[RMDB]
RNA sequence: GGGAACGACUCGAGUAGAGUCGAAAACAUUGGCAUUUCGAUGCCAAUGGGUCUGCGUCGCGCGGCCGCCGAGUCGUUCCCGCGGCCCCGUGACGCAGUUUGGGCAGCUCGAGUUCGCUCGAGCUAAGCUAGAUUCAUGAUUCGUCAUGAAUCUAGCAAAAGAAACAACAACAACAAC
Reactivity to 2A3 in 0.01 (KOAc 150mM, MgCl2 10mM, bicine 150mM(pH8.5), 24C), signal-to-noise 3, nucleotides 027 to 126: c000a000u000u000g000g000c000a010u040u070u090c260g110a010u020g000c000c010a000a000u000g010g000g040u020c010u000g000c000g000u010c000g000c000g010c010g020g010c000c020g010c070c170g070a070g030u000c000g000u010u010c000c000c000g010c000g000g000c020c010c010c000g000u000g000a000c000g000c000a000g000u000u100u020g010g010g050c050a010g000c000u000c000g000a000g010u070u070c170g020c040u000c000g000a020g000c000u020a010a010
Reactivity to DMS in 0.01 (KOAc 150mM, MgCl2 10mM, bicine 150mM(pH8.5), 24C), signal-to-noise 9, nucleotides 027 to 126: c010a010u000u000g000g010c000a010u000u000u020c180g010a040u000g010c000c000a000a000u000g000g000g010u000c010u000g010c000g010u000c000g010c010g040c300g010g000c000c000g020c000c250g010a140g010u000c010g010u000u000c000c000c000g010c010g010g000c000c000c070c010g030u000g000a010c010g010c000a000g000u000u000u000g000g010g020c200a060g010c000u000c000g000a020g010u000u010c210g020c010u000c000g000a010g000c010u000a010a080